RNA sequence: GGGAACGACUCGAGUAGAGUCGAAAAGAUAUGGACCGACAAGGGAGCUGCACAUCGGAAACGAUGUGACAGCAUCGAUCUUGCCGGUCCUAAGUCAAAGCGAAUUAAACUUCGGUUUAAUUCGCAACAUGAUAAUAAGCUUCGGCUUAUUAUCAUGAAAAGAAACAACAACAACAAC
Reactivity to 2A3 in 0.01 (KOAc 150mM, MgCl2 10mM, bicine 150mM(pH8.5), 24C), signal-to-noise 4, nucleotides 027 to 126: g000a000u010a000u040g000g000a000c000c000g010a020c010a000a000g030g030g020a050g010c000u010g020c000a000c000a010u000c000g000g010a000a000a000c010g000a000u010g010u010g030a030c010a000g000c000a010u210c020g010a000u000c000u000u000g010c020c000g010g010u010c000c000u000a000a000g000u000c020a060a150a010g000c010g000a000a000u000u000a010a000a000c010u060u120c300g030g000u010u000u000a000a000u010u000c000g000c000a000a010
Reactivity to DMS in 0.01 (KOAc 150mM, MgCl2 10mM, bicine 150mM(pH8.5), 24C), signal-to-noise 6, nucleotides 027 to 126: g010a010u000a030u020g000g000a010c000c000g010a020c000a010a010g010g010g000a010g030c000u000g000c000a010c000a010u000c000g010g000a000a010a020c000g010a020u000g010u000g000a100c010a010g020c000a210u000c260g010a010u010c000u000u000g010c000c000g010g020u000c000c000u000a000a050g000u000c010a130a140a150g010c000g000a020a010u000u000a000a010a010c000u000u020c250g030g010u000u000u000a010a010u000u000c000g020c000a030a050